[RMDB]
RNA sequence: GGGAACGACUCGAGUAGAGUCGAAAACACUGGAACGCGCUGUCAGGCUGAAUAUGGCGACGGAUGAGGAACGUGCACGACUGGAGUCAUGGGAACGUUACAGCGUUCUGGUCAGCCGUGUGGAUCCUGCAAAUCCUGAAUGGCCGGAAAUGCCGCAUGGGUACAGAGUAUUCGUACUCUGUACCCAAAAAGAAACAACAACAACAAC
Reactivity to 2A3 in 0.01 (KOAc 150mM, MgCl2 10mM, bicine 150mM(pH8.5), 24C), signal-to-noise 1, nucleotides 027 to 156: c010a000c000u060g130g110a130a170c040g010c020g020c050u040g090u180c010a030g000g020c000u000g040a060a050u090a070u110g070g000c030g060a020c000g020g000a050u030g020a040g000g010a080a000c090g050u080g010c000a000c000g050a010c010u020g030g080a050g100u110c040a100u120g090g040g030a000a030c000g000u160u300a060c010a030g060c000g000u000u000c000u000g000g040u000c020a010g000c000c010g030u010g020u070g070g080a070u040c000c000u000g040c110a140a190a020u000c000c000u040g050a130a050u090g080g000c000c050g000g020a000a080a000u040g010c000c000g000c050a090
Reactivity to DMS in 0.01 (KOAc 150mM, MgCl2 10mM, bicine 150mM(pH8.5), 24C), signal-to-noise 2, nucleotides 027 to 156: c060a110c050u010g010g030a020a060c050g040c120g020c040u000g010u000c050a170g040g000c050u000g020a100a140u000a120u000g000g000c000g020a220c160g000g010a070u000g000a180g000g010a020a060c000g030u010g030c000a040c010g020a040c040u010g000g000a110g010u000c080a090u000g040g000g000a040a020c020g010u010u000a240c250a210g010c010g000u000u000c010u010g030g060u000c000a050g020c010c000g010u000g020u000g020g000a000u000c010c020u000g020c090a110a070a060u000c020c010u010g000a080a100u010g000g020c010c000g020g020a030a130a180u000g010c000c030g050c050a240